[RMDB]
RNA sequence: GGGAACGACUCGAGUAGAGUCGAAAACUUUGGGGUCAUACUUCUGGAAUACCUCUCAGAAAUGAAUUACUAUAUUGAGGGACAUGAGCAUUUUAGAGCUUUUGCUGCAUAGUUUGAGGCUUUUCCUGAAACACAGAACCAGUUGACAAUAUAUUGACCAUUAUGUAAUGUUCGCAUUACAUAAUGGAAAAGAAACAACAACAACAAC
Reactivity to DMS in 0.01 (KOAc 150mM, MgCl2 10mM, bicine 150mM(pH8.5), 24C), signal-to-noise 2, nucleotides 027 to 156: c070u000u000u000g000g020g030g010u000c030a050u000a020c040u000u010c010u000g020g000a140a090u000a070c020c020u010c030u000c040a110g040a130a100a110u000g000a170a090u000u000a090c050u010a080u010a170u010u010g020a120g030g000g010a080c040a050u010g010a070g030c020a120u000u000u000u000a120g010a120g020c050u000u000u010u010g010c000u050g000c020a080u010a060g020u000u000u000g010a090g020g000c040u000u000u000u010c020c010u000g000a050a050a060c060a080c080a100g000a040a060c010c040a160g000u000u000g000a070c070a060a090u000a110u010a190u020u000g000a300
Reactivity to 2A3 in 0.01 (KOAc 150mM, MgCl2 10mM, bicine 150mM(pH8.5), 24C), signal-to-noise 7, nucleotides 027 to 156: c030u080u030u080g030g000g000g020u030c010a030u050a160c030u030u040c030u050g030g040a080a060u070a130c020c020u020c020u020c040a040g090a090a100a060u110g040a080a080u240u060a110c050u090a050u090a100u250u110g040a050g000g040g010a020c020a050u070g010a010g020c020a040u000u010u070u300a100g010a020g040c020u060u080u090u120g010c020u010g010c020a040u030a060g030u050u060u090g050a030g010g010c040u050u060u050u050c000c010u040g030a040a030a010c070a010c010a080g060a050a030c060c020a030g010u040u020g070a050c060a090a020u160a030u070a050u200u130g050a050
Chemical mapping of a 207-nucleotide RNA with DMS and 2A3.
Values cover nucleotides 27 to 156.
Conditions: 150 mM KOAc, 10 mM MgCl2 and 150 mM bicine (pH 8.5), 24 C.
The 2A3 profile rests on 4,252 reads.
2A3 adducts were read by reverse transcription with SuperScript II with manganese.